[RMDB]
About this RNA: An RNA of 207 nucleotides, treated with DMS and 2A3 and read out base by base. The data come from the RNA Mapping Database (RMDB), library OK3TST. The RNA was probed in 150 mM KOAc, 10 mM MgCl2 and 150 mM bicine (pH 8.5) at 24 C. The 2A3 profile rests on 906 reads. The DMS profile rests on 4,220 reads.
RNA sequence: GGGAACGACUCGAGUAGAGUCGAAAAUCACUGCAACCUUUGCCUCCCGGGUUCAAGUGAUCUUCUGCCUCAGCCUUCCGAGUAGCUGGGAUUACAGGCACAUGCCCAGCUAAUUUUUGUAUUUUUAUUGAGAUGGGAUUUCACCAUCUUGGCCAGAGUGAAAAUUAAAUUUCGAUUUAAUUUUCACAAAAGAAACAACAACAACAAC
Reactivity to DMS in 0.01 (KOAc 150mM, MgCl2 10mM, bicine 150mM(pH8.5), 24C), signal-to-noise 1, nucleotides 027 to 156: u000c030a070c000u000g000c030a060a040c010c020u000u010u000g020c040c000u000c020c040c050g010g030g040u000u000c040a090a060g010u010g010a040u000c020u050u000c030u000g000c000c000u010c030a050g010c010c010u010u000c040c010g010a130g020u000a030g010c010u010g000g020g010a090u000u000a060c050a060g040g030c040a070c050a110u000g000c020c010c000a050g010c010u000a020a010u000u000u010u000u000g000u000a050u010u000u010u000u000a120u050u010g020a040g000a010u000g000g000g020a210u000u010u000c120a050c010c000a020u000c010u000u000g010g020c040c020a100g000a300
Reactivity to 2A3 in 0.01 (KOAc 150mM, MgCl2 10mM, bicine 150mM(pH8.5), 24C), signal-to-noise 2, nucleotides 027 to 156: u020c000a000c040u020g010c040a040a120c000c000u070u130u190g030c000c000u020c010c010c050g060g000g000u040u020c070a100a030g000u010g040a050u010c020u100u030c020u110g030c000c020u010c010a040g000c010c000u030u050c030c020g090a020g080u020a010g010c000u000g000g000g040a040u040u120a040c000a050g040g000c040a010c010a130u070g020c000c000c000a010g000c000u010a040a060u020u060u070u070u100g020u060a130u010u090u040u040u020a230u160u170g000a010g000a000u010g010g000g070a010u100u150u090c030a040c020c020a000u030c020u010u060g030g020c000c020a040g060a010